[RMDB]
RNA sequence: GGGAACGACUCGAGUAGAGUCGAAAAUGUUAAACCUGAUAGUGUGUCUACCAGCGAUUUAGGUAGUCUCAUUGAUUGUAAUGCGGCUUCAGUUAACCAAAUUGUCUUGCGUAAUUCUAAUGGUGCUCGACCUAACUCUUCGGAGUUAGGAAAAGAAACAACAACAACAAC
Reactivity to DMS in 0.01 (KOAc 150mM, MgCl2 10mM, bicine 150mM(pH8.5), 24C), signal-to-noise 9, nucleotides 027 to 129: u030g020u000u000a060a100a070c030c010u000g010a150u030a050g010u010g030u030g000u020c020u040a040c040c010a100g010c170g010a080u010u000u000a100g040g000u030a060g010u030c020u010c000a050u010u020g000a100u050u020g040u050a030a010u000g020c080g000g000c030u000u030c040a090g000u000u000a090a090c060c050a030a020a050u010u020g020u010c070u040u040g040c110g000u000a050a060u030u010c050u000a050a140u000g000g000u000g020c030u010c060g030a270
Reactivity to 2A3 in 0.01 (KOAc 150mM, MgCl2 10mM, bicine 150mM(pH8.5), 24C), signal-to-noise 9, nucleotides 027 to 129: u150g000u070u070a070a040a050c010c000u030g030a080u050a100g060u070g010u010g010u060c030u040a040c000c000a000g040c050g090a070u040u040u130a070g010g000u010a000g020u000c010u000c010a030u020u060g120a120u100u120g090u210a050a020u040g030c020g010g000c000u040u040c050a120g030u060u110a030a050c030c010a020a060a060u100u070g070u050c030u040u090g030c040g050u080a080a080u070u000c010u040a120a010u050g030g020u030g020c020u030c030g030a050

Chemical mapping of a 170-nucleotide RNA with DMS and 2A3. 2A3 adducts were read by reverse transcription with SuperScript II with manganese. It was measured as part of the RMDB library 15KLIB.